[RMDB]
RNA sequence: GGGAACGACUCGAGUAGAGUCGAAAAGGCGUACAACAAGGACGGUCCAAGGGCGAGUCGACCUCCCUCGGCACGAGGACGUGCCUGGUUUUGAGUGGGGGAGGAUGUUAUGGACAAAUUCCGUAACCAUAUGAGGCCUAAUUGAAGAGCGUACCAAGUAAUCUCACGAGUUCGCUCGUGAGAUUACAAAAGAAACAACAACAACAAC
Reactivity to 2A3 in 0.01 (KOAc 150mM, MgCl2 10mM, bicine 150mM(pH8.5), 24C), signal-to-noise 1, nucleotides 027 to 156: g040g000c020g000u060a060c010a160a010c000a070a050g010g000a010c040g000g100u130c090c060a040a090g010g070g000c030g050a030g000u000c010g040a050c020c010u000c000c000c000u040c000g010g000c000a030c000g030a110g160g170a120c030g000u000g000c050c000u030g040g040u090u090u160u220g190a120g080u140g020g030g000g000g000a010g000g000a000u040g000u030u010a040u040g030g020a030c080a060a060a090u190u030c010c000g050u030a000a070c020c020a070u080a070u210g030a080g000g000c010c000u050a050a130u050u110g060a220a070g010a000g010c060g010u020a080c010c000a000a190